This 207-nucleotide RNA was probed chemically with DMS and 2A3. 2A3 adducts were read by reverse transcription with SuperScript II with manganese.

RNA sequence: GGGAACGACUCGAGUAGAGUCGAAAAGGGCCGCAAGCCAAAGGAAGUCGUGAACACCAGCAGUAAAAUGAUGUUCACCAACCACUUUAAUGCGUUGCCACUCGAUGAAAACCAGCGUCGUUAUCUGGUGGUAUCCACGCAGGCGGAAAAUCAUCUGUGAGUCAUUUCAUUUCGAUGAAAUGACUCAAAAAGAAACAACAACAACAAC
Reactivity to DMS in 0.01 (KOAc 150mM, MgCl2 10mM, bicine 150mM(pH8.5), 24C), signal-to-noise 2, nucleotides 027 to 156: g000g000g070c020c080g040c060a110a150g010c060c250a100a050a140g030g010a100a080g010u000c060g000u000g000a010a000c000a020c010c000a040g030c100a170g010u020a040a060a130a010u000g030a020u000g020u020u010c020a030c020c040a080a120c010c010a040c050u000u000u000a050a100u000g020c050g010u000u000g000c030c010a130c070u000c160g000a020u000g000a060a110a100a050c010c030a120g040c190g010u000c070g020u010u000a040u000c040u000g020g040u000g030g000u000a010u000c060c090a020c010g030c090a090g000g010c010g080g000a090a070a040a050u000c020a090u000c020u010g000
Reactivity to 2A3 in 0.01 (KOAc 150mM, MgCl2 10mM, bicine 150mM(pH8.5), 24C), signal-to-noise 2, nucleotides 027 to 156: g060g000g030c000c010g030c030a020a030g060c060c090a030a010a010g030g010a040a020g040u090c030g000u000g000a000a000c000a000c030c010a010g070c030a040g140u300a070a160a130a140u110g040a040u000g000u000u000c000a000c000c010a020a070c020c010a060c020u000u010u020a060a060u040g010c000g040u020u140g000c000c010a020c030u010c030g050a040u050g020a020a030a030a050c020c010a040g010c050g060u080c010g030u020u050a120u050c020u020g050g000u020g020g000u040a070u060c030c000a000c010g000c020a050g070g020c060g010g000a000a010a000a100u090c030a030u010c030u060g120

Conditions: 150 mM KOAc, 10 mM MgCl2 and 150 mM bicine (pH 8.5), 24 C. For 2A3, 1,435 sequencing reads were counted.